[RMDB]
RNA sequence: GGGAACGACUCGAGUAGAGUCGAAAACUGCUCCUAGGCCAUAGAAGUGUCAGGUUUGCUUGCUAACCAGCAGUCCUGAACACAAGUCACAGCAGGUGAGAAUAGGAAUUAGAAGGAAGUGAGGCGACCAUCGUUAGGGAUUCGUCCCUAACGAUGGAAAAGAAACAACAACAACAAC
Reactivity to DMS in 0.01 (KOAc 150mM, MgCl2 10mM, bicine 150mM(pH8.5), 24C), signal-to-noise 4, nucleotides 027 to 126: c060u000g000c070u000c040c040u000a060g010g000c020c030a090u000a120g010a090a110g010u000g010u010c000a000g000g000u000u000u010g020c030u000u020g020c140u020a080a140c200c130a040g000c010a010g000u010c010c000u000g000a060a030c030a020c030a100a090g000u000c070a050c080a060g010c050a030g010g000u010g020a070g000a090a070u000a080g000g000a070a110u000u010a090g000a060a100g000g020a090a060g010u000g000a060g000g000c040g010a170
Reactivity to 2A3 in 0.01 (KOAc 150mM, MgCl2 10mM, bicine 150mM(pH8.5), 24C), signal-to-noise 2, nucleotides 027 to 126: c020u010g020c040u010c020c010u050a060g100g000c000c010a070u060a130g080a220a030g050u000g020u020c010a000g010g000u050u050u020g020c000u050u040g010c040u080a130a170c070c010a000g000c000a000g050u030c000c000u010g060a090a000c010a000c000a010a020g030u000c010a010c020a090g090c000a010g060g070u050g040a070g010a030a100u140a120g000g030a050a030u100u060a070g050a150a030g090g020a060a040g050u070g050a020g040g000c020g010a040
Record summary
The record gives the reactivity of an RNA of 177 nucleotides to DMS and 2A3. The reactions ran in a buffer of 150 mM KOAc, 10 mM MgCl2 and 150 mM bicine (pH 8.5), at 24 C. Reactivities are given for positions 27 through 126. For 2A3, 2,265 sequencing reads were counted. For DMS the reverse transcriptase was MarathonRT. It was measured as part of the RMDB library OK2TRN.